[RMDB]
RNA sequence: GGGAACGACUCGAGUAGAGUCGAAAAGGUAGCCACUUCGGUGGCUACCAAAGAGAUAGUACCUAUUGAGUUCCUGUGUAGGUACUCAUCACAGGAUGUCAAAAACAUGAUUCUUCGGAAUCAUGAAUCUAUAGAGUGACUUCGGUCACUCUAUAGAAAAAGAAACAACAACAACAAC
Reactivity to DMS in 0.01 (KOAc 150mM, MgCl2 10mM, bicine 150mM(pH8.5), 24C), signal-to-noise 4, nucleotides 027 to 126: g030g020u010a010g020c000c000a010c000u000u010c190g030g020u000g010g000c000u000a000c000c010a020a040a080g010a150g020a080u000a030g000u010a030c000c000u000a050u000u000g010a120g020u000u000c010c000u000g010u010g010u010a020g010g000u000a010c020u000c080a040u010c020a100c170a110g000g010a100u010g000u000c140a050a060a090a090a160c010a010u000g000a000u000u000c000u000u010c170g030g000a020a000u000c000a000u000g000a060a080
Reactivity to 2A3 in 0.01 (KOAc 150mM, MgCl2 10mM, bicine 150mM(pH8.5), 24C), signal-to-noise 2, nucleotides 027 to 126: g010g000u010a000g000c000c020a000c020u020u030c180g100g000u000g000g000c010u000a000c000c000a000a000a010g040a000g000a010u050a040g010u020a030c020c000u020a050u030u140g080a060g040u020u010c000c010u020g030u050g030u070a020g020g010u030a050c000u020c010a050u030c000a020c060a070g240g030a110u110g100u220c070a010a040a040a100a110c000a000u000g000a000u020u000c010u050u070c230g070g000a000a000u010c010a000u010g000a000a030

Chemical mapping of a 177-nucleotide RNA with DMS and 2A3.
For 2A3 the reverse transcriptase was SuperScript II with manganese.
The reactions ran in a buffer of 150 mM KOAc, 10 mM MgCl2 and 150 mM bicine (pH 8.5), at 24 C.